[RMDB]
RNA sequence: GGGAACGACUCGAGUAGAGUCGAAAACUUACCUUAAACUCCCUUUUAUACUCUUUUGUGGUUGUGUAGCAACCCUUUGGAGUAUUUUUUUGGAAAAAAUGCUAAAUAUAAGAAAACUCCUCAAACAUAUAUCCUGUGUCUUCGGACACAGGAUAUAAAAAGAAACAACAACAACAAC
Reactivity to 2A3 in 0.01 (KOAc 150mM, MgCl2 10mM, bicine 150mM(pH8.5), 24C), signal-to-noise 1, nucleotides 027 to 126: c000u110u110a100c000c040u060u110a090a070a040c060u060c000c000c000u020u000u000u000a000u000a000c000u000c000u000u060u010u000g170u150g000g010u020u000g040u010g100u120a180g110c020a000a020c010c010c020u010u000u000g000g000a000g000u000a000u050u020u000u000u000u000u010g030g090a100a020a000a000a000a000u050g010c000u170a080a210a080u120a240u190a220a060g040a070a100a030a000c010u070c040c000u040c020a100a000a120c040a010